RNA sequence: GGGAACGACUCGAGUAGAGUCGAAAAACGAGAUAAUGUGCUUACAGAAAGUUGGUUGAAUUGAAUGCAAUUAAUGUUUGGAGGCACUUAGUCUUCUAGUGUUUGAAUGUGGAUGGAAUUAAAGCUGCGUAGGUAAUUACUUCGGUAAUUACCUACGAAAAGAAACAACAACAACAAC
Reactivity to 2A3 in 0.01 (KOAc 150mM, MgCl2 10mM, bicine 150mM(pH8.5), 24C), signal-to-noise 2, nucleotides 027 to 126: a000c010g010a070g010a030u040a050a070u120g010u000g030c000u030u060a030c010a000g110a050a120a090g020u010u040g060g000u000u010g030a080a080u180u070g140a170a040u150g040c020a000a020u030u020a020a010u080g060u120u140u010g030g000a010g000g000c000a000c000u000u050a010g010u000c000u060u030c030u020a080g000u020g030u090u070u070g120a110a040u110g040u020g060g060a060u060g040g050a090a060u080u120a150a070a060g040c050u060g000
Reactivity to DMS in 0.01 (KOAc 150mM, MgCl2 10mM, bicine 150mM(pH8.5), 24C), signal-to-noise 4, nucleotides 027 to 126: a080c130g010a030g010a040u000a070a060u010g000u000g000c020u000u000a100c030a030g010a050a060a140g010u000u000g010g010u010u000g010a040a080u010u010g010a160a190u010g010c000a010a020u000u010a030a040u000g000u010u000u000g000g010a060g000g000c010a010c020u000u010a290g010u000c010u000u000c100u000a060g020u000g020u010u010u000g010a060a050u000g010u000g010g010a050u000g010g010a080a080u010u010a030a060a100g020c080u010g010